[RMDB]
The record gives the reactivity of an RNA of 207 nucleotides to 2A3 and DMS. Conditions: 150 mM KOAc, 10 mM MgCl2 and 150 mM bicine (pH 8.5), 24 C. The DMS profile rests on 3,347 reads. 2A3 adducts were read by reverse transcription with SuperScript II with manganese.
RNA sequence: GGGAACGACUCGAGUAGAGUCGAAAAGAGUUCGGUUGGAGCGACAAGUAUUUAGCUUGAGAUAGCUAAAUCACCUCGGUAUGAUUAGGGUGAGAGCUAGGAACCGUAGGGGUAUUCUCAAAGGAAGGUUACCGAACAACCUUCGGGUUGUUCGGAAGUAACUACCUCUCUUCGGAGAGGUAGUUACAAAAGAAACAACAACAACAAC
Reactivity to 2A3 in 0.01 (KOAc 150mM, MgCl2 10mM, bicine 150mM(pH8.5), 24C), signal-to-noise 3, nucleotides 027 to 156: g060a010g030u070u110c060g030g010u040u090g040g020a060g020c030g060a060c010a040a030g030u050a070u040u060u020a020g000c000u020u020g010a030g020a110u110a030g000c010u010a010a010a010u040c030a020c010c010u080c100g050g030u150a110u190g110a170u090u150a060g060g000g000u040g040a090g010a000g010c030u060a030g000g050a040a040c040c060g020u050a040g000g010g010g000u050a060u180u030c060u020c040a110a070a000g070g010a040a030g070g000u080u090a050c010c000g000a000a000c000a000a000c000c000u050u050c060g040g000g000u000u000g000u000u000c000g000g000a000a000
Reactivity to DMS in 0.01 (KOAc 150mM, MgCl2 10mM, bicine 150mM(pH8.5), 24C), signal-to-noise 2, nucleotides 027 to 156: g000a100g000u000u010c040g040g000u010u000g000g000a080g030c050g020a060c040a050a060g020u010a090u000u000u000a000g000c000u010u000g000a280g010a150u000a010g000c020u000a000a010a040u000c020a060c020c010u010c030g040g010u000a060u010g020a220u010u000a080g000g030g030u000g000a110g020a070g010c050u010a060g020g010a040a040c000c040g050u000a130g000g000g060g010u000a060u000u000c020u010c060a100a070a110g030g000a010a060g020g000u000u000a120c010c000g000a030a030c000a010a030c000c010u000u000c300g030g030g050u010u000g020u010u010c000g000g010a010a040